Annotation:
The data come from the RNA Mapping Database (RMDB), library OK3TST. This 207-nucleotide RNA was probed chemically with DMS and 2A3. For 2A3, 2,072 sequencing reads were counted. In probing experiments dimethyl sulfate is read out at A N1 and C N3, which are open when not base-paired. 2A3 adducts were read by reverse transcription with SuperScript II with manganese. DMS adducts were read by reverse transcription with MarathonRT. Conditions: 150 mM KOAc, 10 mM MgCl2 and 150 mM bicine (pH 8.5), 24 C. As a SHAPE reagent, 2A3 marks flexible, mostly unpaired nucleotides at the ribose 2'-OH.
[RMDB]
RNA sequence: GGGAACGACUCGAGUAGAGUCGAAAAAUUCUAUGUUCAUGAUACCCAUCAAUCAGUUGUAUUUCAGGGCCAACUUUAAUAAUACCAUUUCGCACGCCGAAUAGGUCAUGGUCUUGAUCCAUAUUUUCAAGUAUACCCUUCUCCUCAAAGAAAUGGUAACAUUGAAAGAUUUCGAUCUUUCAAUGUUAAAAGAAACAACAACAACAAC
Reactivity to DMS in 0.01 (KOAc 150mM, MgCl2 10mM, bicine 150mM(pH8.5), 24C), signal-to-noise 2, nucleotides 027 to 156: a090u000u000c060u000a080u000g000u010u010c060a090u010g020a180u000a090c050c010c070a200u000c100a070a110u010c060a100g020u000u000g030u000a120u010u000u010c000a110g020g010g030c010c020a030a080c030u010u000u020a060a090u000a090a120u000a040c010c010a060u000u010u000c020g000c060a140c140g000c030c010g000a130a110u000a120g010g000u000c060a080u010g030g020u000c040u010u020g000a010u000c070c090a100u000a110u000u000u000u000c040a040a060g000u010a110u010a080c030c010c030u000u000c020u020c020c040u000c070a090a070a190g000a020a030a030u000g010g020u000
Reactivity to 2A3 in 0.01 (KOAc 150mM, MgCl2 10mM, bicine 150mM(pH8.5), 24C), signal-to-noise 4, nucleotides 027 to 156: a010u120u050c070u080a100u190g110u050u100c090a060u110g050a030u110a120c030c050c030a050u070c070a040a100u080c050a040g040u060u030g040u180a130u030u120u070c050a020g000g000g000c000c030a030a010c040u140u220u150a110a100u160a100a030u060a100c010c020a060u020u040u020c030g010c090a150c150g130c130c010g060a060a050u060a110g000g030u060c050a060u050g000g000u000c000u000u010g010a010u000c030c000a050u030a120u150u090u080u090c030a050a050g020u020a080u060a190c040c000c000u060u020c040u060c040c010u090c040a100a120a040g030a010a060a000u090g000g020u010